[RMDB]
RNA sequence: GGGAACGACUCGAGUAGAGUCGAAAACAGGGCCAGAAGACCGUGGUGCUCGCCGACCCACGCUCCAACAGCAUCGUGAUCCGCUCGCCGAGCCCCGAGCGCACGCAAUUGGCGCGCGACCUGAUCAAUUAAAUCGUCACUUCGGUGACGAUUUAAUAAAAGAAACAACAACAACAAC
Reactivity to DMS in 0.01 (KOAc 150mM, MgCl2 10mM, bicine 150mM(pH8.5), 24C), signal-to-noise 2, nucleotides 027 to 126: c110a090g010g020g010c020c030a120g020a150a130g000a080c080c050g030u000g000g020u000g020c030u000c070g000c150c030g000a060c090c060c020a060c060g030c090u010c050c080a100a110c160a070g000c120a100u000c080g000u000g020a100u020c050c050g000c050u000c040g010c090c050g000a090g050c080c020c030c000g020a100g030c000g020c010a050c070g020c100a090a170u000u010g000g000c030g000c050g030c020g020a060c050c050u010g020a060u000c120a100